[RMDB]
Structure probing data (2A3 and DMS) for a 207-nucleotide construct. For DMS the reverse transcriptase was MarathonRT. It was measured as part of the RMDB library OK3TST. The RNA was probed in 150 mM KOAc, 10 mM MgCl2 and 150 mM bicine (pH 8.5) at 24 C. The 2A3 profile rests on 636 reads. Reactivities are given for positions 27 through 156.

RNA sequence: GGGAACGACUCGAGUAGAGUCGAAAACGAUGCCGCAUUGCAAACCUUGCCAGAAGACAGCACCUUCGAAUUCACAGGUGCGAAAGCCGGCGACAAAGUUUACGUGGUGCCACAGUCACAAAUUUCGGGUGUGCCAUGGAUCGGCUGGAACUCCCAAUGGAGUAUUAGGUUUCGACCUAAUACUCCAAAAAGAAACAACAACAACAAC
Reactivity to 2A3 in 0.01 (KOAc 150mM, MgCl2 10mM, bicine 150mM(pH8.5), 24C), signal-to-noise 2, nucleotides 027 to 156: c010g170a160u020g000c080c000g000c030a040u020u030g000c020a040a070a050c010c020u070u080g000c010c000a040g000a170a000g020a100c050a000g000c000a000c020c000u170u210c060g150a120a120u160u160c100a110c020a110g020g000u000g000c000g000a010a000a000g080c020c030g000g090c030g010a010c120a040a170a050g010u040u040u100a050c080g050u010g010g030u080g110c080c090a010c100a080g010u060c040a000c010a090a060a090u180u180u080c080g020g000g000u010g030u020g000c010c010a020u000g030g060a140u050c020g040g000c000u000g030g000a040a050c010u000c000c000c020a000a050
Reactivity to DMS in 0.01 (KOAc 150mM, MgCl2 10mM, bicine 150mM(pH8.5), 24C), signal-to-noise 1, nucleotides 027 to 156: c040g000a160u010g010c000c030g050c030a150u000u020g080c010a030a060a050c030c030u010u000g000c040c030a300g010a140a120g020a050c060a300g020c010a090c000c020u000u020c100g010a080a220u010u000c060a110c170a090g000g050u000g000c000g050a050a080a210g050c010c000g000g020c040g010a020c020a020a020a030g000u000u000u000a030c040g010u000g000g000u000g000c040c010a040c030a110g040u030c100a210c050a070a090a180u000u010u010c050g000g030g030u020g010u000g020c000c020a070u000g030g000a080u000c030g000g080c010u040g020g010a070a060c070u000c000c000c000a020a300